[RMDB]
The record gives the reactivity of an RNA of 177 nucleotides to DMS and 2A3. For 2A3 the reverse transcriptase was SuperScript II with manganese. For DMS the reverse transcriptase was MarathonRT. The 2A3 profile rests on 2,385 reads.
RNA sequence: GGGAACGACUCGAGUAGAGUCGAAAAGAUAUGGAUUGGUGGAGCUACUCGUCGGAAACGACGACUAGCGUUGAAACCACGGUCCUAAGUCAAAACUGUACACUUUGGUUCGCCAAAGUGUACAGAAGGUAUUUGGGAUGUUCGCAUCCCAAAUACCAAAAGAAACAACAACAACAAC
Reactivity to DMS in 0.01 (KOAc 150mM, MgCl2 10mM, bicine 150mM(pH8.5), 24C), signal-to-noise 2, nucleotides 027 to 126: g000a030u010a190u020g010g000a020u000u020g040g050u000g010g010a060g050c000u010a000c240u000c000g060u020c010g000g000a060a040a130c000g020a000c000g000a010c050u000a010g020c000g010u000u000g000a120a120a150c010c000a020c300g020g010u000c010c010u000a050a090g010u000c020a120a080a100a160c000u010g000u000a000c000a030c000u000u000u000g000g010u010u010c270g020c000c000a010a000a010g020u010g000u000a000c010a000g000a040a040
Reactivity to 2A3 in 0.01 (KOAc 150mM, MgCl2 10mM, bicine 150mM(pH8.5), 24C), signal-to-noise 1, nucleotides 027 to 126: g020a010u060a010u090g040g020a020u040u120g300g000u000g000g050a010g000c000u000a000c000u000c010g010u000c000g030g000a050a060a050c000g020a000c000g020a010c000u010a000g000c000g100u070u120g060a030a000a010c000c000a000c050g030g020u000c000c000u030a150a010g030u010c040a000a000a060a150c010u010g020u000a000c010a000c000u010u000u010g080g000u010u130c200g050c090c000a000a000a000g010u000g000u000a000c010a010g000a000a000